The data come from the RNA Mapping Database (RMDB), library OK1LIB. An RNA of 177 nucleotides, treated with 2A3 and DMS and read out base by base. The DMS profile rests on 5,325 reads.
RNA sequence: GGGAACGACUCGAGUAGAGUCGAAAAGCUCUCCUGCAGGAGCAAGAGCGAAGACAUGUGAGGAGCACCUGCAUCACUUGUCGAUUAGCAGCUUGACGUGGAGCGCCAGCAACGUCUUGCUGCGAAAGGGUAGCUUGACGUUCGCGUCGAGCUACCCAAAAGAAACAACAACAACAAC
Reactivity to 2A3 in 0.01 (KOAc 150mM, MgCl2 10mM, bicine 150mM(pH8.5), 24C), signal-to-noise 5, nucleotides 027 to 126: g010c010u000c000u030c030c060u050g080c060a110g020g170a090g050c050a060a020g040a000g070c080g030a120a020g010a010c020a010u070g010u030g050a050g020g060a040g020c020a060c040c020u070g010c000a050u020c000a000c000u010u020g000u030c020g070a080u060u110a020g000c000a000g000c000u010u000g000a000c000g000u020g030g160a140g020c020g030c050c030a030g000c010a010a000c000g000u000c000u000u010g010c010u000g010c000g010a030a010a000
Reactivity to DMS in 0.01 (KOAc 150mM, MgCl2 10mM, bicine 150mM(pH8.5), 24C), signal-to-noise 3, nucleotides 027 to 126: g010c010u000c000u010c040c040u020g020c020a140g000g000a120g010c130a140a070g000a060g000c020g000a160a100g000a000c030a000u010g020u000g020a070g000g010a050g030c040a090c030c040u010g000c020a110u000c000a030c000u010u010g030u000c000g000a280u040u050a080g010c020a000g000c000u020u020g010a010c000g010u010g010g000a090g000c060g020c060c070a080g010c010a120a010c010g010u000c010u020u000g000c000u010g000c010g010a010a060a120
DMS adducts were read by reverse transcription with MarathonRT.